RNA sequence: GGGAACGACUCGAGUAGAGUCGAAAACCGAGCGGCUCAUCUCGGCAAGAGGCGGCGAUCCUCAGUACUCUUACUCUUUUCUUUUGAAAGAGGAGACUGCUGGAUCCGCCGCCCGAGCCCGAGCAUGAGCCAAGUCGGGACGAAGAGAUCGCGGGGGCCGAUACGUAGUCUUCGGACUACGUAUCGGAAAAGAAACAACAACAACAAC
Reactivity to 2A3 in 0.01 (KOAc 150mM, MgCl2 10mM, bicine 150mM(pH8.5), 24C), signal-to-noise 1, nucleotides 027 to 156: c000c000g010a100g070c050g000g000c010u000c000a000u000c000u000c010g000g000c010a080a070g060a190g020g000c000g000g020c000g000a000u000c000c010u000c000a060g020u120a300c070u010c040u100u160a220c020u000c000u060u200u110u050c110u070u300u220u300g050a000a000a000g010a000g000g010a000g000a000c000u000g030c060u020g020g000a010u020c060c100g000c000c000g010c000c000c010g010a000g030c000c010c020g000a000g020c050a000u000g020a000g000c010c000a000a000g000u000c000g000g000g030a040c050g040a160a060g080a020g020a080u100c070g000c020g170g000g000g020g030
Chemical mapping of a 207-nucleotide RNA with 2A3. Source: RMDB library VIROID, as collected in RNAgym.